Structure probing data (2A3) for a 207-nucleotide construct. The reactions ran in a buffer of 150 mM KOAc, 10 mM MgCl2 and 150 mM bicine (pH 8.5), at 24 C. 2A3 adducts were read by reverse transcription with SuperScript II with manganese. Reactivities are given for positions 27 through 156.

RNA sequence: GGGAACGACUCGAGUAGAGUCGAAAAGAAAGAGAGUUAGACACGGUUGAUCUCACCCUUCGGGGGGGCUAUAGAGAUCACUGGAAGCACUACCGGACAACCAGAACAUUGCAGCAAUGCAGCCCAAAAAAUCCAAACAUCUUCGGAUGUUUGGAAACGUAAGACAGAUCUUCGGAUCUGUCUUACGAAAAGAAACAACAACAACAAC
Reactivity to 2A3 in 0.01 (KOAc 150mM, MgCl2 10mM, bicine 150mM(pH8.5), 24C), signal-to-noise 1, nucleotides 027 to 156: g120a040a080a010g100a000g040a000g020u060u110a050g070a000c070a010c130g030g050u060u160g010a010u010c000u010c010a040c000c000c020u070u060c210g010g000g010g000g010g000g000c090u120a100u040a090g010a000g000a000u000c000a000c010u000g020g010a000a000g000c000a000c090u070a070c010c030g010g090a030c030a100a080c040c010a000g020a100a040c050a050u100u180g020c030a020g030c010a000a070u030g010c010a030g010c050c000c010a030a220a030a000a020a020u020c000c000a000a000a000c000a000u050c000u040u030c130g130g000a000u000g000u010u000u000g000g000a000a050a000